[RMDB]
RNA sequence: GGGAACGACUCGAGUAGAGUCGAAAACACCGACGAGGUGACGGGCGCCUUGUUGCGCCGGACCGGAACGGUGGUCGUGGAGCACCGGUUUGACGGCCAUGUGGUGCGACGGAUGACUGCCACGCUGAGAGCCAAAGGUGUUCGCACCUUUGGCUCUAAAAGAAACAACAACAACAAC
Reactivity to 2A3 in 0.01 (KOAc 150mM, MgCl2 10mM, bicine 150mM(pH8.5), 24C), signal-to-noise 2, nucleotides 027 to 126: c030a050c000c000g080a160c030g100a150g030g000u000g050a020c000g020g000g010c010g010c000c000u250u270g050u120u220g000c010g000c000c010g040g030a030c000c000g000g080a140a000c000g000g020u000g000g040u040c030g010u080g000g000a000g050c010a000c010c000g000g030u110u000u160g150a030c000g030g010c000c030a160u300g120u300g090g000u160g120c080g000a000c000g040g030a140u100g000a100c000u010g050c000c000a000c000g030c070u130g100
Reactivity to DMS in 0.01 (KOAc 150mM, MgCl2 10mM, bicine 150mM(pH8.5), 24C), signal-to-noise 1, nucleotides 027 to 126: c000a020c000c010g030a030c000g000a300g000g000u010g000a190c000g040g000g080c000g000c000c090u080u010g010u090u000g000c000g030c000c010g000g000a110c040c000g000g000a090a080c100g000g040u000g000g000u000c030g000u000g000g000a180g020c060a050c050c010g000g020u000u000u000g080a230c050g040g000c000c000a190u030g010u010g020g010u020g000c030g010a290c020g000g000a150u000g040a060c000u000g000c010c000a020c150g010c300u010g010